[RMDB]
Chemical mapping of a 177-nucleotide RNA with 2A3 and DMS. DMS adducts were read by reverse transcription with MarathonRT. For 2A3, 3,076 sequencing reads were counted. The RNA was probed in 150 mM KOAc, 10 mM MgCl2 and 150 mM bicine (pH 8.5) at 24 C. For DMS, 1,767 sequencing reads were counted.

RNA sequence: GGGAACGACUCGAGUAGAGUCGAAAAAGAGCGCAUUAAUGCUAUUGCCAAACGCACGCCAUAUUUAUCAAAAAUAGCACCUAGUUCAUCGUAUUCAAUGCAUGAUGUGCAUGAAGCUGGUGGCGUCCCACUGUCGUGUAUUCGUACACGACAGUGGAAAAGAAACAACAACAACAAC
Reactivity to 2A3 in 0.01 (KOAc 150mM, MgCl2 10mM, bicine 150mM(pH8.5), 24C), signal-to-noise 4, nucleotides 027 to 126: a000g120a010g000c080g010c080a090u080u180a120a030u230g000c010u050a040u040u110g050c010c000a050a070a020c050g040c040a030c030g000c010c020a030u030a090u100u210u070a180u170c070a060a120a050a090a060u060a020g010c010a010c010c040u070a050g050u020u040c010a020u020c040g020u030a140u120u150c120a170a090u110g060c020a000u090g090a030u150g090u020g020c000a020u030g050a030a020g040c030u030g010g000u010g000g050c010g010u090c000
Reactivity to DMS in 0.01 (KOAc 150mM, MgCl2 10mM, bicine 150mM(pH8.5), 24C), signal-to-noise 2, nucleotides 027 to 126: a100g000a120g000c040g020c160a060u000u010a110a130u010g000c020u010a070u010u000g020c080c060a070a050a060c120g000c080a060c060g000c010c020a070u000a050u010u000u000a110u050c170a020a040a050a060a030u010a030g000c040a070c070c070u010a080g010u000u010c050a030u000c040g020u000a070u000u000c110a030a040u010g020c060a080u000g000a080u010g010u000g020c050a040u000g030a020a090g020c110u000g000g000u000g000g000c020g000u000c070